[RMDB]
RNA sequence: GGGAACGACUCGAGUAGAGUCGAAAAAAAGAAGUGGGGGAGUUUAUGUUGCGGAAAGGCUAAAAGGAAGUGACUGUUAGGAGGUUAUGGGAUAAAGGACAGAAGCCAGGCUCCAAGUGAGUAUAGGCCUAUUAACGAAGUUCGCUUCGUUAAUAGGAAAAGAAACAACAACAACAAC
Reactivity to 2A3 in 0.01 (KOAc 150mM, MgCl2 10mM, bicine 150mM(pH8.5), 24C), signal-to-noise 3, nucleotides 027 to 126: a010a000a030g100a090a020g000u100g000g000g010g000g010a020g020u000u010u040a090u080g040u030u050g060c030g040g040a050a040a050g050g000c050u060a040a060a020a060g050g010a020a050g040u040g080a020c020u020g080u130u060a050g030g040a000g050g000u070u090a030u160g020g000g010a030u070a090a140a020g040g000a000c030a030g030a050a010g000c020c020a020g050g000c010u000c000c000a060a020g100u130g060a010g030u040a070u090a090g050g030
Reactivity to DMS in 0.01 (KOAc 150mM, MgCl2 10mM, bicine 150mM(pH8.5), 24C), signal-to-noise 5, nucleotides 027 to 126: a070a060a070g000a090a060g020u010g010g010g000g010g020a060g020u000u010u000a050u020g020u010u000g020c050g010g000a070a060a080g000g010c060u020a050a050a080a070g010g000a080a070g010u000g010a070c070u000g010u010u000a090g010g000a050g010g010u010u010a050u000g000g000g000a080u000a040a050a070g010g000a080c090a060g010a080a070g010c040c040a080g000g000c020u000c020c030a050a100g000u000g010a040g020u010a100u010a090g000g000